[RMDB]
RNA sequence: GGGAACGACUCGAGUAGAGUCGAAAAAAAAAAGAUAUGGAUCCCAGGAGCAAUGAUGUUACGUAGUUGAGUCGGAAACGACUCAGGUUCGAAGUAAUUGAGCUCCCUGGGAUCCUAAGUCAAAAAACCUAAGCAUAACGUUCGCGUUAUGCUUAGGAAAAGAAACAACAACAACAAC
Reactivity to DMS in 0.01 (KOAc 150mM, MgCl2 10mM, bicine 150mM(pH8.5), 24C), signal-to-noise 2, nucleotides 027 to 126: a000a050a070a170a140a220g010a010u000a080u000g000g000a020u000c000c010c010a010g010g000a090g010c000a300a120u000g010a060u000g010u000u000a000c020g000u010a230g010u000u000g010a020g010u010c000g010g000a040a050a060c000g020a020c000u000c010a010g000g000u000u020c030g000a100a300g000u000a000a010u000u000g010a030g010c000u010c290c020c010u010g020g010g000a010u000c000c000u000a000a020g000u000c000a000a070a060a100a080a100